[RMDB]
RNA sequence: GGGAACGACUCGAGUAGAGUCGAAAAGAUAUGGACGUCCGGCAGCUUUUGACGAUCCCAGUGAUCGGAAACGAUCACGGGAUCGAUAAGCUGCGGACGUCCUAAGUCAAACUCGUGUUCGCACGAGCAUUACCAGUCCCUUCGGGGACUGGUAAUGAAAAGAAACAACAACAACAAC
Reactivity to DMS in 0.01 (KOAc 150mM, MgCl2 10mM, bicine 150mM(pH8.5), 24C), signal-to-noise 3, nucleotides 027 to 126: g000a060u000a300u010g000g010a000c010g010u000c000c000g060g060c000a000g000c000u000u000u000u020g010a220c180g000a000u000c010c020c010a190g050u010g020a010u000c000g010g010a130a090a200c000g000a000u000c010a000c000g010g010g010a000u000c000g010a020u000a010a030g010c000u000g010c000g000g000a000c000g020u010c000c000u000a000a090g010u020c050a080a100a300c000u000c000g030u000g010u010u020c270g040c020a020c000g000a040g010
Reactivity to 2A3 in 0.01 (KOAc 150mM, MgCl2 10mM, bicine 150mM(pH8.5), 24C), signal-to-noise 2, nucleotides 027 to 126: g000a030u070a060u190g000g020a000c040g000u040c060c050g300g300c080a000g000c060u170u150u050u200g220a130c000g020a020u000c060c040c080a150g000u000g000a010u020c010g020g040a040a060a050c070g000a000u050c000a010c030g000g000g000a000u000c000g010a000u010a000a020g000c000u000g000c030g030g000a010c010g010u000c000c000u000a010a000g010u010c020a000a020a100c010u010c010g000u020g050u150u110c300g000c110a000c000g010a020g050